[RMDB]
RNA sequence: GGGAACGACUCGAGUAGAGUCGAAAACGCGCGUUCGCGCGCGCACCGUGCGUACUACUCAGACAUGAUAUUAUGACGAGGAGAUUCCCAAAUAGGAAUCUCCGAUGAGUCAGAAUAUCAACAGCUGAGUAUCGCUUAGAACCCUCUUCGGAGGGAAUGAUUAAUAUAGGUUCGCCUAUAUUAAUCAAAAAGAAACAACAACAACAAC
Reactivity to 2A3 in 0.01 (KOAc 150mM, MgCl2 10mM, bicine 150mM(pH8.5), 24C), signal-to-noise 2, nucleotides 027 to 156: c020g040c000g010c000g000u100u220c210g030c000g040c010g000c020g060c210a060c000c040g050u090g000c020g050u100a120c050u000a030c000u020c020a000g020a270c050a140u030g000a010u000a000u060u030a020u040g020a010c020g010a060g010g000a000g000a000u000u000c000c000c030a120a120a090u240a030g000g000a010a010u000c000u000c000c000g010a030u070g010a000g000u000c000a060g000a000a000u000a000u000c020a020a060c060a110g040c020u000g000a000g010u000a000u000c000g000c000u030u070a070g020a060a080c000c000c000u020c040u060u080c300g150g040a020g000g000g000a040a010
Reactivity to DMS in 0.01 (KOAc 150mM, MgCl2 10mM, bicine 150mM(pH8.5), 24C), signal-to-noise 1, nucleotides 027 to 156: c000g000c000g090c010g080u010u000c240g000c010g010c060g090c000g020c020a190c010c030g070u000g030c010g010u000a080c100u000a010c000u010c010a020g010a050c050a300u000g000a030u000a000u010u000a020u000g000a000c040g010a220g000g010a030g010a030u000u000c000c010c050a050a120a290u000a050g000g010a040a010u000c000u000c000c000g010a030u010g010a260g020u000c010a000g010a000a030u000a010u000c010a000a080c040a230g020c010u030g000a060g000u000a030u000c000g000c040u010u040a060g010a130a220c000c010c000u000c000u000u000c300g010g010a010g030g030g000a020a000
An RNA of 207 nucleotides, treated with 2A3 and DMS and read out base by base. For DMS the reverse transcriptase was MarathonRT.